[RMDB]
RNA sequence: GGGAACGACUCGAGUAGAGUCGAAAACAGUGUUUGGCAGAGGUGUAUGGAGUGAGAGAAGGGAAAGGGUAUUUUCCGAUUCUGUCGUUACUCUCUUCCCUCUCUCAUUCCAUACAUCGUCUGACGAACGUAUCAAACUGGAACUUCGGUUCCAGAACUGAGUAUUGAGCUUCGGCUCAAUACUCAGAAAAGAAACAACAACAACAAC
Reactivity to 2A3 in 0.01 (KOAc 150mM, MgCl2 10mM, bicine 150mM(pH8.5), 24C), signal-to-noise 1, nucleotides 027 to 156: c030a030g030u010g010u140u000u000g010g000c000a010g000a010g040g000u000g000u000a000u000g010g000a020g010u000g000a010g000a030g060a120a140g020g000g010a000a010a010g050g020g030u010a060u120u100u070u080c050c000g050a070u120u190c140u240g100u080c020g020u010u000a010c000u060c000u050c300u000u030c000c010c000u000c000u000c000u000c000a000u000u000c000c010a000u000a000c000a000u000c010g000u000c000u000g000a000c000g000a000a010c000g020u070a130u170c140a120a070a080c000u000g000g000a000a010c000u030u060c210g070g010u010u000c000c010a000g000a000a010